[RMDB]
Source: RMDB library RNAMAK, as collected in RNAgym. The record gives the reactivity of an RNA of 207 nucleotides to DMS and 2A3.

RNA sequence: GGGAACGACUCGAGUAGAGUCGAAAAGGGCUUUCGAGCCCAUAUCUUCCUAAGUCCAGCGGGAGCAUGUGCGCUUCGAUGAAAGUAUCGGAAACGAUACUGGAGAAGCGUGCAUGCUUUGAUCGCUGGAUAUGGAUUGGUUCCUGUUCGCAGGAAACACGUACUAAAGGUUCGCCUUUAGUACGUGAAAAGAAACAACAACAACAAC
Reactivity to DMS in 0.01 (KOAc 150mM, MgCl2 10mM, bicine 150mM(pH8.5), 24C), signal-to-noise 2, nucleotides 027 to 156: g000g010g020c000u000u010u010c240g020a090g000c000c000c020a020u000a010u000c130u000u000c000c000u010a110a170g020u000c000c010a010g030c010g020g010g010a020g020c000a020u000g030u000g020c020g000c000u000u000c000g010a190u010g030a190a150a060g010u000a000u000c000g030g000a180a130a230c000g010a020u000a010c000u000g000g000a100g020a020a010g000c010g020u000g000c000a010u000g010c010u010u000u000g000a090u010c010g030c000u010g000g050a010u000a070u000g000g020a140u000u000g020g010u000u000c010c000u000g000u010u000c220g000c060a030g000g020a050a090a300
Reactivity to 2A3 in 0.01 (KOAc 150mM, MgCl2 10mM, bicine 150mM(pH8.5), 24C), signal-to-noise 1, nucleotides 027 to 156: g020g000g030c100u120u210u300c300g070a020g000c000c000c000a020u060a000u070c010u040u000c020c000u040a120a090g010u000c000c000a000g020c020g010g040g000a020g000c000a030u010g010u010g000c000g010c040u000u020c040g270a300u050g030a040a010a010g010u000a000u010c010g020g080a100a000a050c020g010a010u010a010c030u010g000g000a010g000a000a000g000c050g000u000g000c000a000u000g000c010u000u000u000g010a010u010c000g000c000u010g000g000a000u000a000u000g040g010a040u080u220g070g020u070u030c030c000u010g020u060u070c290g000c150a020g060g000a060a060a030
Values cover nucleotides 27 to 156. The reactions ran in a buffer of 150 mM KOAc, 10 mM MgCl2 and 150 mM bicine (pH 8.5), at 24 C. For 2A3 the reverse transcriptase was SuperScript II with manganese.